[RMDB]
RNA sequence: GGGAACGACUCGAGUAGAGUCGAAAAGAUAUGGACGUUGUACACUUCGAGGAUCAACAGUCGGAAACGACUGUUGGGAGAAGGUACUGACGUCCUAAGUCAAAACAAGGUCCUUCGGGACCUUGAAGUAUGCUUUGUCGUUCGCGACAAAGCAUACAAAAGAAACAACAACAACAAC
Reactivity to 2A3 in 0.01 (KOAc 150mM, MgCl2 10mM, bicine 150mM(pH8.5), 24C), signal-to-noise 1, nucleotides 027 to 126: g020a010u030a020u030g000g000a000c000g000u000u040g030u010a030c300a190c220u000u000c000g150a300g010g010a000u010c000a010a020c000a000g000u020c020g000g000a010a010a000c030g000a000c000u040g010u000u000g000g030g000a010g000a010a000g000g000u000a000c040u070g020a050c030g010u000c000c000u000a010a000g000u010c010a000a000a190a220c010a000a000g000g000u010c010c000u210u230c300g040g000g000a000c030c000u000u010g000a000a010
Reactivity to DMS in 0.01 (KOAc 150mM, MgCl2 10mM, bicine 150mM(pH8.5), 24C), signal-to-noise 1, nucleotides 027 to 126: g000a020u000a080u010g000g000a000c010g020u000u020g040u000a000c000a220c140u000u000c000g010a040g060g020a040u010c020a020a000c010a010g020u010c000g000g000a010a000a070c000g000a010c000u000g000u000u000g000g000g030a010g000a010a000g010g040u000a000c020u010g010a010c010g110u000c000c000u000a000a020g000u020c000a130a140a130a300c010a060a000g000g010u000c000c000u010u010c190g030g010g020a000c000c000u000u000g000a050a130